RNA sequence: GGGAACGACUCGAGUAGAGUCGAAAAGUCGGCGCGCAAGCCGCAGCGAUUCGGCAAUGAGGACAUCAUCACUUUCAACGGCCGGCCGAAGGCUGAGUUCGUGGGUGAGGGUCAACAGAAGUCGAGCACCACCGGCGAAUUCGACUUCGUGACCAGCCGUACAGGUUUAGUUCGCUAAACCUGUACGAAAAGAAACAACAACAACAAC
Reactivity to 2A3 in 0.01 (KOAc 150mM, MgCl2 10mM, bicine 150mM(pH8.5), 24C), signal-to-noise 6, nucleotides 027 to 156: g040u030c010g010g020c030g000c000g030c110a100a020g070c050c050g010c030a020g040c030g090a140u080u080c030g010g000c030a030a100u100g020a050g030g050a060c010a100u090c010a040u040c010a050c040u060u160u110c080a120a040c030g020g000c010c000g010g000c000c010g130a070a030g030g000c100u030g010a030g050u070u100c010g000u040g090g000g000u000g010a090g020g020g040u030c010a030a050c020a100g150a240a030g040u070c040g020a010g020c030a070c090c010a040c030c020g090g000c030g020a020a050u030u020c000g010a000c030u000u000c010g000u010g040a100c010c010a000g030c000
Reactivity to DMS in 0.01 (KOAc 150mM, MgCl2 10mM, bicine 150mM(pH8.5), 24C), signal-to-noise 2, nucleotides 027 to 156: g010u000c020g000g020c020g030c120g050c100a070a140g010c050c030g000c070a070g010c040g010a130u000u010c010g000g030c040a070a100u010g020a130g000g020a110c060a060u010c090a100u000c040a110c050u000u000u000c030a140a150c000g030g010c010c010g000g030c000c030g010a070a060g020g020c030u010g020a070g040u000u000c020g070u000g000g000g010u020g000a180g000g000g010u000c010a060a160c030a130g020a120a100g020u010c050g020a080g000c020a060c010c020a040c030c020g000g010c010g000a050a130u000u010c000g010a010c010u010u000c010g000u000g010a220c020c010a080g030c050